[RMDB]
RNA sequence: GGGAACGACUCGAGUAGAGUCGAAAACGGUACUAUGAAUUGAUGCAAGGUGUGGAGCGACCUUAAACAGUACUGGUGGUGCUCUGAAUGGAGUGCUCUACUGAGAUUAUAAAAUAGAAGGUAAGCUGAAGGGGAAAUGAGUUCGCUCAUUUCCCAAGUCUGUGGUGCUCUUCGGAGCACCACAGACAAAAGAAACAACAACAACAAC
Reactivity to 2A3 in 0.01 (KOAc 150mM, MgCl2 10mM, bicine 150mM(pH8.5), 24C), signal-to-noise 1, nucleotides 027 to 156: c030g030g040u030a000c000u040a080u110g070a080a050u110u040g060a070u120g050c050a010a060g000g000u030g010u070g080g000a030g020c030g030a030c000c010u010u060a020a090a020c030a000g010u010a050c060u090g000g020u000g030g010u000g000c010u030c030u080g080a030a080u200g020g000a000g020u070g070c050u030c010u040a060c040u130g030a030g000a110u080u000a040u190a140a040a030a010u080a010g040a030a030g030g020u090a030a050g020c060u040g060a020a080g000g000g000g010a010a000a000u000g000a000g030u110u090c130g030c090u020c000a000u000u000u000c000c000c000a010a000
Structure probing data (2A3) for a 207-nucleotide construct. The data come from the RNA Mapping Database (RMDB), library M2RFPK. For 2A3, 595 sequencing reads were counted. 2A3 adducts were read by reverse transcription with SuperScript II with manganese.